[RMDB]
Background: An RNA of 207 nucleotides, treated with 2A3 and read out base by base.
RNA sequence: GGGAACGACUCGAGUAGAGUCGAAAAUACCGCAGGCCUGCGGUGCGGCAGUGUGGAGACCUGCCGUAAGCCGUGUUGUUUUGAGAACCGGGAGAAAGCGUAUGCGGAGGCAGCGCUUUCAGGGUCUAAAAGUAUGGGAUCUUCGGAUCCCAUACAAUCGCGUAGAAUAGUUCGCUAUUCUACGCGAAAAAGAAACAACAACAACAAC
Reactivity to 2A3 in 0.01 (KOAc 150mM, MgCl2 10mM, bicine 150mM(pH8.5), 24C), signal-to-noise 1, nucleotides 027 to 156: u060a000c000c000g000c010a040g080g240c010c120u050g000c030g000g000u000g010c000g000g000c010a010g010u030g000u040g300g080a040g020a060c010c000u000g000c000c000g000u000a040a000g060c030c000g120u040g030u040u020g020u010u050u040u080g120a120g000a040a040c000c000g010g040g000a100g010a020a000a000g000c000g000u050a270u170g020c000g000g120a060g280g000c010a000g000c000g010c040u000u000u000c010a010g020g030g010u010c020u010a110a120a030a010g000u000a000u020g000g020g000a000u000c010u010u050c120g060g000a020u010c000c000c000a030u000a000c000a000a000